[RMDB]
RNA sequence: GGGAACGACUCGAGUAGAGUCGAAAAUUGCUACCGUUAUUGUUAUUAUUAUUACUUUGUUUUUCCAGGACUGAAGCAUUGCUUAGGCCUCUCCUCUAGACUAAGACAUUUACAAUAAACGCUUUGGAAUCUUCCUUUUUUUUGAGACAGGGUCUCGAUCCAGAUAUUGCUUCGGCAAUAUCUGGAUAAAAGAAACAACAACAACAAC
Reactivity to 2A3 in 0.01 (KOAc 150mM, MgCl2 10mM, bicine 150mM(pH8.5), 24C), signal-to-noise 1, nucleotides 027 to 156: u040u040g120c000u010a000c040c000g040u010u010a040u100u010g010u000u040a010u010u010a050u080u000a100u110u120a300c060u180u130u040g090u090u190u080u040u110c070c030a030g000g060a110c090u010g010a050a020g010c040a060u000u300g050c010u070u000a010g030g020c010c010u010c000u000c020c020u060c010u030a030g040a010c030u030a010a010g030a000c060a070u070u140u110a030c010a050a010u110a100a210a020c100g030c070u070u140u140g020g050a020a000u080c000u070u010c000c000u000u050u000u000u010u090u140u250g030a060g010a000c090a000g300g000g050u000c010u030c000g000
The data come from the RNA Mapping Database (RMDB), library OK3TST. This 207-nucleotide RNA was probed chemically with 2A3. The reactions ran in a buffer of 150 mM KOAc, 10 mM MgCl2 and 150 mM bicine (pH 8.5), at 24 C.